[RMDB]
RNA sequence: GGGAACGACUCGAGUAGAGUCGAAAAAUAACAGUGAAAUUGGGUUGUAUACAAAUCCAACUUUGGAGGACAUCCCACAUUCUGCUUGGGACCUUUUCUGCUGGGACAGUGAGAAAACUUUGCCAAACAUAAGUAGCGGAUUCGUCCGCUACUUAUGAAAAGAAACAACAACAACAAC
Reactivity to 2A3 in 0.01 (KOAc 150mM, MgCl2 10mM, bicine 150mM(pH8.5), 24C), signal-to-noise 3, nucleotides 027 to 126: a000u130a040a020c010a020g030u040g090a090a040a080u030u010g000g020g030u010u040g040u090a180u040a190c080a060a070a020u010c020c010a040a070c100u130u120u090g020g010a040g020g020a010c010a040u040c000c020c010a030c000a010u110u090c050u090g060c060u040u050g000g030g010a050c000c000u020u030u030u100c020u010g050c020u050g000g000g140a040c020a030g060u050g060a090g050a070a070a020a020c030u090u120u100g030c040c020a000a010a080
Reactivity to DMS in 0.01 (KOAc 150mM, MgCl2 10mM, bicine 150mM(pH8.5), 24C), signal-to-noise 4, nucleotides 027 to 126: a110u000a080a100c080a070g010u010g010a020a060a070u000u000g010g010g010u000u000g000u000a130u020a150c160a050a050a050u020c020c020a020a070c130u000u000u010g020g010a090g010g000a060c110a100u000c010c000c010a070c180a090u010u000c050u010g010c100u000u000g000g010g000a100c070c030u000u000u010u010c030u000g000c060u000g000g010g000a090c090a020g020u020g020a080g010a050a020a050a050c100u000u000u000g000c030c050a100a070a220